[RMDB]
RNA sequence: GGGAACGACUCGAGUAGAGUCGAAAACAAUUUUAUGCACUAACAACAUUUUUCUCAGCUACUAAAGGUCAAAUAACUGUAAAAUCGUGGUUCCCUCCCCCGAACCUGUGGCAGGUGCCCCCCAGCACAUAGGCAACGUAUUCGUACGUUGCCUAUGAAAAGAAACAACAACAACAAC
Reactivity to DMS in 0.01 (KOAc 150mM, MgCl2 10mM, bicine 150mM(pH8.5), 24C), signal-to-noise 3, nucleotides 027 to 126: c070a030a070u020u030u030u020a040u020g020c050a070c050u010a060a130c150a050a100c070a090u000u010u010u000u010c030u010c020a070g010c030u000a050c060u010a070a080a060g000g010u000c070a010a100a090u020a080a050c070u000g000u000a020a050a070a070u010c070g010u000g000g000u000u000c000c010c000u010c000c020c000c000c020g030a080a050c020c050u000g020u000g010g030c000a050g020g000u020g010c000c010c000c000c000c010a030g010c170a120
Reactivity to 2A3 in 0.01 (KOAc 150mM, MgCl2 10mM, bicine 150mM(pH8.5), 24C), signal-to-noise 5, nucleotides 027 to 126: c030a030a040u090u090u110u130a130u110g070c050a040c050u100a100a020c080a030a040c030a090u020u050u000u140u010c040u020c030a040g020c000u030a010c010u080a200a110a020g040g010u050c060a110a070a140u140a150a070c040u120g060u180a050a020a050a100u130c060g010u030g030g000u010u000c000c000c000u010c000c000c010c000c010g010a020a020c000c020u050g020u070g090g030c060a010g010g040u030g010c010c000c000c000c000c000a000g030c000a000